The data come from the RNA Mapping Database (RMDB), library OK2TRN. Structure probing data (DMS and 2A3) for a 177-nucleotide construct. DMS adducts were read by reverse transcription with MarathonRT. The RNA was probed in 150 mM KOAc, 10 mM MgCl2 and 150 mM bicine (pH 8.5) at 24 C. Reactivities are given for positions 27 through 126.
[RMDB]
RNA sequence: GGGAACGACUCGAGUAGAGUCGAAAAUGCGACACCGUUGCUUAUCAUAGCCAGAUAUCAAGCUUUUUGUGCCCAGCGGCGUUUCAGUACAGUGUUAAUCGCAGCCUUUAUUUUCGGCGUGCUGGCAGGUCGUUAGACAAUUCGUUGUCUAACGACCAAAAGAAACAACAACAACAAC
Reactivity to DMS in 0.01 (KOAc 150mM, MgCl2 10mM, bicine 150mM(pH8.5), 24C), signal-to-noise 2, nucleotides 027 to 126: u010g020c050g000a080c050a050c050c050g000u000u000g020c020u010u010a080u010c060a080u010a080g020c030c110a080g000a090u010a090u010c120a100a130g010c040u000u000u010u010u000g010u010g010c120c230c010a090g020c050g030g010c030g000u000u000u020c030a050g020u010a080c120a060g010u000g000u010u000a060a060u010c100g010c030a070g000c030c020u000u000u000a070u020u000u000u020c110g000g030c000g060u000g000c010u000g010g010c110a070
Reactivity to 2A3 in 0.01 (KOAc 150mM, MgCl2 10mM, bicine 150mM(pH8.5), 24C), signal-to-noise 1, nucleotides 027 to 126: u080g040c030g060a010c000a010c010c060g130u080u050g070c000u130u130a080u100c030a100u090a050g010c030c020a050g100a160u130a050u210c070a120a080g020c000u080u150u110u290u230g060u100g070c000c020c000a030g020c040g000g000c020g010u080u160u130c040a020g060u060a030c010a030g050u000g070u160u140a080a080u080c030g010c030a030g030c000c080u000u220u120a200u040u170u080u070c030g000g010c020g000u060g000c010u010g050g060c030a010